The record gives the reactivity of an RNA of 177 nucleotides to DMS. DMS adducts were read by reverse transcription with MarathonRT. It was measured as part of the RMDB library OK2TRN. In probing experiments dimethyl sulfate is read out at A N1 and C N3, which are open when not base-paired. The DMS profile rests on 700 reads.
RNA sequence: GGGAACGACUCGAGUAGAGUCGAAAAUUAUACCACAAGAAGCAUGGACUGGCAAUGCCUAGGCUCGAGGAGGAAGUUGACCUAGUUGAAGACUUCAUUGUGUAUGACUGGGUGAUUGAAGAUAGAAGUUUUAGUAGGCGUUCGCGCCUACUAAAACAAAAGAAACAACAACAACAAC
Reactivity to DMS in 0.01 (KOAc 150mM, MgCl2 10mM, bicine 150mM(pH8.5), 24C), signal-to-noise 1, nucleotides 027 to 126: u020u000a080u000a150c010c020a030c130a050a070g000a110a050g010c080a110u000g000g010a040c080u000g030g000c040a020a100u000g040c040c040u000a040g030g060c010u000c070g030a060g020g010a110g030g010a070a030g000u000u000g030a130c030c020u000a050g020u010u000g000a160a220g010a010c000u040u000c190a080u000u000g000u010g000u010a040u020g000a060c030u000g100g030g000u010g000a080u000u000g030a030a080g000a190u000a080g010a050a110